[RMDB]
RNA sequence: GGGAACGACUCGAGUAGAGUCGAAAAUCAUUGAGAUGCUGGGCGCUAUGGUCGUCCUCCUCCGGCUGACCUCCUUCUCAGCUGCUGACCGGCGCCGCAAAGGCGGCAUCUCAGCUUCGUGUGCAAAAAAAGAAUGGUCGGUUCGCCGACCAUUCAACAUCAGUAUUCGGUUCGCCGAAUACUGAUGAAAAGAAACAACAACAACAAC
Reactivity to 2A3 in 0.01 (KOAc 150mM, MgCl2 10mM, bicine 150mM(pH8.5), 24C), signal-to-noise 2, nucleotides 027 to 156: u100c030a020u010u070g000a000g000a000u000g010c010u040g020g020g060c020g000c050u110a210u260g040g000u030c030g060u100c030c040u030c010c010u040c020c020g000g000c000u000g010a010c000c080u100c020c030u250u080c050u010c040a010g010c000u010g020c080u110g010a000c000c000g010g010c000g000c010c010g030c030a050a030a020g210g040c000g000g000c000a010u000c000u000c010a000g000c020u170u130c080g140u100g010u040g100c100a060a030a060a050a000a060a000g020a000a000u000g000g000u000c000g030g000u010u020c110g020c030c000g000a010c000c000a000u000u000c000a010a000
Reactivity to DMS in 0.01 (KOAc 150mM, MgCl2 10mM, bicine 150mM(pH8.5), 24C), signal-to-noise 2, nucleotides 027 to 156: u010c070a080u010u010g000a060g020a010u000g010c010u000g010g000g000c020g000c020u000a060u000g080g000u010c000g010u010c020c000u000c040c030u000c020c000g010g050c010u030g000a050c080c100u000c090c090u010u010c060u000c010a050g010c020u010g020c060u000g010a020c030c010g000g030c020g000c020c000g070c100a080a130a180g040g010c070g000g000c010a010u000c000u000c010a040g020c110u000u020c110g000u010g000u000g050c020a000a000a080a120a110a100a170g000a040a000u000g000g020u010c010g000g020u000u000c300g000c000c000g010a010c000c000a000u000u000c010a080a210

An RNA of 207 nucleotides, treated with 2A3 and DMS and read out base by base.
Reactivities are given for positions 27 through 156.
The RNA was probed in 150 mM KOAc, 10 mM MgCl2 and 150 mM bicine (pH 8.5) at 24 C.
The data come from the RNA Mapping Database (RMDB), library M2RFPK.